[RMDB]
RNA sequence: GGGAACGACUCGAGUAGAGUCGAAAAAUGAUUCUGCUUCAGAUCAAGAUAUCUUCACUGUUGAACAGGUUGAUAGUGAUGAAACAGUACAGUAUACUCAAAAAGAUUUGAGUGACUUUAUUGAAGCCAAAUUGAAUUACUUCGGUAAUUCAAUUUGAAAAGAAACAACAACAACAAC
Reactivity to 2A3 in 0.01 (KOAc 150mM, MgCl2 10mM, bicine 150mM(pH8.5), 24C), signal-to-noise 4, nucleotides 027 to 126: a000u050g010a010u040u010c030u060g010c000u000u010c010a020g010a060u000c010a060a000g040a120u080a030u050c010u020u010c030a060c120u040g030u060u060g100a260a090c110a220g160g150u060u060g030a010u020a020g040u020g020a030u020g000a040a110a030c050a030g080u070a030c000a010g010u020a100u040a170c020u000c000a010a010a020a080a180g180a250u050u030u020g010a000g010u010g000a010c010u080u100u070a100u060u100g010a010a000g000c000
Reactivity to DMS in 0.01 (KOAc 150mM, MgCl2 10mM, bicine 150mM(pH8.5), 24C), signal-to-noise 6, nucleotides 027 to 126: a120u000g000a020u000u000c040u010g000c000u000u000c020a050g010a040u000c000a070a120g000a180u010a040u000c010u000u010c010a040c010u000g010u000u000g010a060a260c200a080g020g010u000u000g010a010u010a010g000u000g000a040u000g000a070a090a100c130a090g000u000a030c190a020g010u000a080u010a010c000u000c000a010a010a070a180a200g010a180u000u000u010g000a010g000u000g000a020c010u000u000u000a020u000u000g000a020a020g010c010